[RMDB]
RNA sequence: GGGAACGACUCGAGUAGAGUCGAAAAUAGCCCGAAGUGUUAUUUGCAAAGCGUCCAGUAGAUCGAAAACGCGCUUGCAUAGAGAUUAUUUAACCAUUUUGCUGGUAACGCAUUAGCGGGCAAAAUGUGUUCCGUUACUGUUCGCAGUAACGGAACAAAAAGAAACAACAACAACAAC
Reactivity to 2A3 in 0.01 (KOAc 150mM, MgCl2 10mM, bicine 150mM(pH8.5), 24C), signal-to-noise 1, nucleotides 027 to 126: u050a010g040c000c000c030g000a090a040g040u110g060u160u130a150u050u100u050g000c000a000a010a140g040c000g030u030c000c040a060g030u130a060g130a170u140c070g120a000a030a030a070c020g000c000g000c030u000u010g000c000a000u000a000g090a030g010a060u120u030a100u040u300u040a070a030c000c040a030u010u000u020u060g010c030u060g000g140u140a090a010c040g050c000a030u050u220a120g000c010g020g020g000c030a000a040a040a000u050g050
Reactivity to DMS in 0.01 (KOAc 150mM, MgCl2 10mM, bicine 150mM(pH8.5), 24C), signal-to-noise 2, nucleotides 027 to 126: u010a150g000c000c010c020g030a090a150g000u000g020u010u000a040u000u000u040g000c010a050a070a120g020c030g030u000c060c110a300g060u020a080g000a140u010c090g000a110a110a140a040c080g010c020g000c220u000u010g000c000a040u000a040g010a130g020a060u000u010a120u030u000u040a110a070c090c010a030u000u000u000u000g000c000u000g010g020u010a050a300c030g000c000a140u020u000a060g010c000g000g000g000c000a020a010a010a010u000g010
Source information:
This 177-nucleotide RNA was probed chemically with 2A3 and DMS. Values are in units of 0.01, from 0 to 300, in steps of 10.